[RMDB]
RNA sequence: GGGAACGACUCGAGUAGAGUCGAAAAGCAUCGCCAUCACCGACCCCAAGCUCGCCUUCAGCGCCAUCACGCAGUUCUGCCAGGAUAUCCUGCUGUACGGGUUCAGCACGUUCCUGCCCACCAUCCUCAAGGGGAUCGGCUAUGAUUCGCUGAUGAGUCAGAUAUACGCAUUCGUGCGUAUAUCUGAAAAAGAAACAACAACAACAAC
Reactivity to DMS in 0.01 (KOAc 150mM, MgCl2 10mM, bicine 150mM(pH8.5), 24C), signal-to-noise 2, nucleotides 027 to 156: g010c000a050u000c050g000c000c020a040u000c060a110c060c000g010a160c020c000c000c010a070a130g010c060u010c030g030c030c020u010u010c040a140g060c040g030c040c080a120u000c050a080c040g020c020a080g040u000u000c060u000g040c020c050a060g010g010a070u010a040u000c040c020u000g050c020u000g030u000a180c100g030g000g000u000u000c040a100g000c050a080c040g000u000u000c020c020u000g020c010c040c010a050c030c040a070u010c030c010u010c080a080a190g020g040g000g000a020u000c040g050g000c010u000a100u010g020a110u000u000c030g030c000u010g000a080u000g010a170g020
Reactivity to 2A3 in 0.01 (KOAc 150mM, MgCl2 10mM, bicine 150mM(pH8.5), 24C), signal-to-noise 4, nucleotides 027 to 156: g080c010a020u060c020g020c040c010a040u050c020a020c010c020g040a050c000c010c010c010a000a040g010c040u060c060g020c020c030u090u050c060a050g020c030g020c050c030a070u070c010a020c080g020c020a020g020u100u030c040u050g060c020c030a010g030g000a030u060a050u190c030c030u030g000c010u030g020u060a050c060g040g070g000u090u130c010a000g020c020a000c020g020u040u040c000c000u010g010c020c000c000a050c010c030a060u080c010c020u060c060a090a100g010g000g050g000a100u020c020g000g000c010u030a040u100g030a040u020u080c060g010c040u030g000a040u080g010a040g050

Structure probing data (DMS and 2A3) for a 207-nucleotide construct. It was measured as part of the RMDB library OK3TST. For DMS the reverse transcriptase was MarathonRT. The 2A3 profile rests on 4,318 reads.